This 177-nucleotide RNA was probed chemically with DMS and 2A3. 2A3 adducts were read by reverse transcription with SuperScript II with manganese. It was measured as part of the RMDB library TTRDEL.
[RMDB]
RNA sequence: GGGAACGACUCGAGUAGAGUCGAAAAGAUAUGGACCGUGCGAAUCGUACGUAACAUCUGUUCGGAAACGAACAGUGGUACGAGUUGUGCACGUCCUAAGUCAAACGGAACUGUUCGCAGUUCCGAAUCUAUUAGCACGGUUCGCCGUGCUAAUAGAAAAAGAAACAACAACAACAAC
Reactivity to DMS in 0.01 (KOAc 150mM, MgCl2 10mM, bicine 150mM(pH8.5), 24C), signal-to-noise 6, nucleotides 027 to 126: g010a040u000a300u010g000g000a010c130c140g020u000g000c000g000a050a070u000c000g010u000a010c010g010u000a030a070c160a020u010c000u000g000u000u000c000g010g000a100a090a240c000g010a010a000c000a010g020u000g000g000u000a000c010g000a030g020u000u010g020u000g020c010a010c020g010u000c000c000u000a040a110g000u000c040a060a100a280c020g000g000a010a000c000u000g000u010u010c190g010c020a010g010u000u000c000c000g000a030a030
Reactivity to 2A3 in 0.01 (KOAc 150mM, MgCl2 10mM, bicine 150mM(pH8.5), 24C), signal-to-noise 6, nucleotides 027 to 126: g040a020u080a050u160g030g000a030c160c270g020u000g000c000g060a070a090u010c010g000u020a010c010g040u070a080a050c040a270u110c020u000g010u010u000c010g000g040a120a060a060c000g000a010a000c000a000g000u020g000g000u000a000c010g000a050g070u120u140g300u130g040c010a000c010g010u000c000c000u030a130a010g070u030c060a090a030a050c020g000g010a000a000c000u010g040u110u130c300g000c170a000g000u000u020c000c000g000a000a030